[RMDB]
RNA sequence: GGGAACGACUCGAGUAGAGUCGAAAAGGUGUGCUGCAAGGGGGUAUCCCGAUGCAAGCCUAGGAUACCCGCGCAGGUCUGUCUUCCCGGCGAGGUCAAGCCGACGAUGACUAAGAUCCUGGGUAUAGGAUAGGACUUCAUUCGUGAAGUCCUAUCCAAAAGAAACAACAACAACAAC
Reactivity to 2A3 in 0.01 (KOAc 150mM, MgCl2 10mM, bicine 150mM(pH8.5), 24C), signal-to-noise 1, nucleotides 027 to 126: g010g010u090g000u050g100c030u010g000c050a050a020g140g000g000g040g120u120a140u110c050c000c000g060a020u140g000c000a020a040g000c000c010u030a040g020g090a010u010a070c040c020c010g090c110g020c020a020g010g000u020c010u030g000u020c010u040u040c000c030c000g010g000c010g010a110g050g190u150c030a080a010g000c010c000g020a010c030g040a050u040g010a000c000u020a040a050g010a040u180c000c000u080g000g110g000u150a100u180a100
Reactivity to DMS in 0.01 (KOAc 150mM, MgCl2 10mM, bicine 150mM(pH8.5), 24C), signal-to-noise 3, nucleotides 027 to 126: g000g010u000g010u000g020c080u010g010c040a120a210g000g020g010g010g010u020a030u010c000c010c020g000a140u010g020c070a050a190g000c010c010u010a080g010g000a080u000a050c000c000c000g010c180g030c090a030g000g000u000c030u000g000u000c020u000u010c000c040c010g010g010c000g000a180g000g020u010c240a130a140g000c030c010g010a060c210g010a040u000g010a020c020u000a090a120g000a020u000c010c000u000g000g000g000u000a110u000a110
This 177-nucleotide RNA was probed chemically with 2A3 and DMS. The reactions ran in a buffer of 150 mM KOAc, 10 mM MgCl2 and 150 mM bicine (pH 8.5), at 24 C. The data come from the RNA Mapping Database (RMDB), library OK2TST.